[RMDB]
Conditions: 150 mM KOAc, 10 mM MgCl2 and 150 mM bicine (pH 8.5), 24 C. The record gives the reactivity of an RNA of 177 nucleotides to 2A3 and DMS. Reactivities are given for positions 27 through 126. DMS adducts were read by reverse transcription with MarathonRT. 2A3 adducts were read by reverse transcription with SuperScript II with manganese. For 2A3, 7,143 sequencing reads were counted.
RNA sequence: GGGAACGACUCGAGUAGAGUCGAAAAACAUUGGCCUUCGGGCCAAUGUACUGGAAAUAAAGCCGAAUGGCUACGCAUUCCUUAUUUGGCGAAAGCCUGCGAGAUUAUGUAAGUUCGCUUACAUAAAAGACUCAUAUCUUUUCGAAGAUAUGAGUCUAAAAGAAACAACAACAACAAC
Reactivity to 2A3 in 0.01 (KOAc 150mM, MgCl2 10mM, bicine 150mM(pH8.5), 24C), signal-to-noise 6, nucleotides 027 to 126: a000c000a000u010u000g000g010c000c010u040u040c260g060g010g000c000c000a000a000u000g000u000a010c020u040g050g110a050a070a070u190a100a190a010g010c020c020g180a220a160u300g010g000c000u030a030c090g020c020a070u020u050c000c000u070u120a180u170u170u110g030g000c010g050a080a030a000g000c010c000u020g000c070g050a180g020a130u070u030a000u030g000u000a000a010g010u010u090c200g020c070u000u000a000c000a000u030a020a050a000
Reactivity to DMS in 0.01 (KOAc 150mM, MgCl2 10mM, bicine 150mM(pH8.5), 24C), signal-to-noise 6, nucleotides 027 to 126: a040c010a000u010u000g000g020c000c000u000u010c180g040g020g020c000c000a000a000u000g010u000a030c130u000g010g000a040a060a080u020a060a130a060g010c010c010g010a140a050u010g020g010c010u000a040c130g010c100a180u000u000c010c020u000u010a100u000u010u010g010g010c010g010a120a070a170g010c010c000u010g010c140g000a130g010a150u000u000a010u000g000u000a000a010g010u000u020c230g020c000u010u000a000c000a010u000a000a020a090